Record summary
The record gives the reactivity of an RNA of 207 nucleotides to DMS and 2A3. For 2A3, 1,681 sequencing reads were counted.
[RMDB]
RNA sequence: GGGAACGACUCGAGUAGAGUCGAAAACGGUCCUGCCAUGAGACCGUAACGAGGACAUGUCGCCUCGAAUGGGGUCGGGGAGCCGGCAGCUUACCCCAAGGAUGAGCGCCUAAUGCCGGUACCCGGGUAUACGCUACCCCGUUCGCGGGGUAGCGAACUAUGUACCCAGAUUCGUCUGGGUACAUAGAAAAGAAACAACAACAACAAC
Reactivity to DMS in 0.01 (KOAc 150mM, MgCl2 10mM, bicine 150mM(pH8.5), 24C), signal-to-noise 1, nucleotides 027 to 156: c010g000g010u000c000c010u000g050c060c270a110u000g030a060g000a030c000c010g040u000a030a160c010g000a040g040g030a110c060a180u010g000u000c080g000c010c000u000c000g020a160a100u010g000g000g000g000u010c000g010g000g000g020a300g040c000c010g000g000c010a130g000c000u000u000a050c010c000c000c170a190a180g020g010a070u000g030a090g000c010g000c130c240u010a080a160u020g020c010c000g010g030u000a020c010c000c000g060g010g020u000a070u010a080c010g040c000u000a040c010c010c010c000g040u000u010c140g000c000g050g000g020g020u000a020g050c000g020a020a070
Reactivity to 2A3 in 0.01 (KOAc 150mM, MgCl2 10mM, bicine 150mM(pH8.5), 24C), signal-to-noise 3, nucleotides 027 to 156: c000g010g010u010c020c010u060g160c050c020a200u170g020a080g000a130c000c000g000u010a040a030c010g000a000g010g020a030c080a230u210g060u210c120g020c000c000u000c000g000a030a030u080g000g000g000g020u030c000g000g000g020g000a050g080c000c000g010g020c000a000g000c000u000u050a060c010c000c030c110a070a090g050g020a150u080g010a000g010c010g060c030c060u100a120a050u050g010c000c000g010g000u000a020c000c000c020g040g000g010u170a110u030a030c020g000c000u000a020c020c010c020c030g030u030u070c170g000c010g080g000g050g000u010a000g000c000g000a000a010